Source: RMDB library M2RFPK, as collected in RNAgym. An RNA of 207 nucleotides, treated with 2A3 and read out base by base. The 2A3 profile rests on 980 reads.
RNA sequence: GGGAACGACUCGAGUAGAGUCGAAAAGCAUCGACGACGGUCCUGCCAUGAGACCGUAACGAGGACAUGUCGCCUCGAAUGGCGUCGGGGAGCCGGCAGCUUCCCCCAAGGAUGAGCGCCUAAUGCCUAUACCCGAUUCGCUUCGGCGAAUCGGGAAGCGUAGAGACAGAUUCGUCUGUCUCUACGCAAAAGAAACAACAACAACAAC
Reactivity to 2A3 in 0.01 (KOAc 150mM, MgCl2 10mM, bicine 150mM(pH8.5), 24C), signal-to-noise 2, nucleotides 027 to 156: g070c020a040u100c080g120a100c050g000a000c000g000g030u020c010c020u050g090c070c070a190u140g040a090g010a150c000c000g020u030a020a070c020g010a010g030g020a010c060a140u250g030u110c140g010c030c000u010c000g020a050a150u140g010g010c030g030u050c000g000g000g010g000a010g020c030c120g070g000c040a020g010c030u090u120c000c000c010c010c070a080a050g070g010a040u080g030a000g050c030g000c000c030u090a110a050u060g000c000c000u120a140u090a130c000c000c000g000a000u010u000c000g010c010u010u050c020g020g000c000g000a010a010u000c000g000g000g000a000a050